[RMDB]
RNA sequence: GGGAACGACUCGAGUAGAGUCGAAAAGAAGAGAAGAAACGGCCUUUGGUAGGAAAGGCCGAACAAGCGUGACCUACCAACACGCAAGGAGCAGGCUGGUAUUCCUGCAAAGAGAGAGUAGGAGAAAAUAUCACCCUGACUUCGGUCAGGGUGAUAUAAAAGAAACAACAACAACAAC
Reactivity to DMS in 0.01 (KOAc 150mM, MgCl2 10mM, bicine 150mM(pH8.5), 24C), signal-to-noise 2, nucleotides 027 to 126: g020a100a190g000a130g000a160a070g010a170a100a160c000g000g000c000c000u000u000u000g000g060u010a070g050g020a000a060a030g000g040c010c010g000a130a000c140a080a160g010c020g000u010g000a120c070c010u050a060c070c000a060a110c070a080c040g020c060a180a110g050g010a120g000c010a030g000g020c040u000g000g000u000a150u030u020c000c000u000g010c010a010a100a110g030a170g020a090g000a020g020u010a020g000g010a160g000a130a010a100
Reactivity to 2A3 in 0.01 (KOAc 150mM, MgCl2 10mM, bicine 150mM(pH8.5), 24C), signal-to-noise 2, nucleotides 027 to 126: g120a040a010g030a010g030a160a010g030a060a180a020c020g010g000c000c000u090u040u000g090g100u240a040g000g050a040a000a000g030g030c000c000g000a020a010c020a010a030g010c000g000u010g030a180c000c000u020a020c030c010a020a000c000a010c010g000c020a040a080g000g000a050g050c020a000g000g010c000u070g060g000u040a010u070u020c000c000u020g010c010a030a130a000g080a000g000a000g000a000g050u020a030g010g040a040g070a000a070a010